Chemical mapping of a 177-nucleotide RNA with DMS and 2A3.
For DMS, 2,854 sequencing reads were counted.
The RNA was probed in 150 mM KOAc, 10 mM MgCl2 and 150 mM bicine (pH 8.5) at 24 C.
DMS adducts were read by reverse transcription with MarathonRT.
[RMDB]
RNA sequence: GGGAACGACUCGAGUAGAGUCGAAAAGUACGCACUCACGUAGCUGACAUGGAUGAUCACAUGCUAGCUACUAGGUAGUACCGAUCGACGAUCAGUACCUGAUCAGACAGUACGAUCCAGCACUAUCCUAAUGCCCUCAGUUCGCUGAGGGCAUUAGAAAAGAAACAACAACAACAAC
Reactivity to DMS in 0.01 (KOAc 150mM, MgCl2 10mM, bicine 150mM(pH8.5), 24C), signal-to-noise 4, nucleotides 027 to 126: g000u000a030c020g000c260a030c020u000c070a120c250g010u000a000g010c010u010g000a020c000a000u000g000g000a110u010g040a210u010c210a090c030a000u000g010c010u000a010g040c000u000a010c000u000a150g010g010u000a100g020u000a040c000c040g000a300u000c010g000a050c070g000a020u010c020a060g000u000a080c190c060u000g010a020u000c040a110g000a220c120a030g000u000a040c000g010a050u000c020c050a120g000c160a060c110u000a100u000c080
Reactivity to 2A3 in 0.01 (KOAc 150mM, MgCl2 10mM, bicine 150mM(pH8.5), 24C), signal-to-noise 4, nucleotides 027 to 126: g010u010a000c040g040c130a030c030u090c020a030c140g000u010a010g000c000u000g020a020c000a010u010g050g050a140u230g100a130u260c080a060c000a090u000g020c020u020a010g000c000u000a010c000u000a000g030g000u010a010g020u010a000c000c000g020a080u030c000g050a040c060g000a020u010c010a020g040u080a180c050c110u020g030a040u040c010a000g080a070c020a030g030u120a080c020g010a020u000c000c030a040g060c090a040c070u140a100u190c020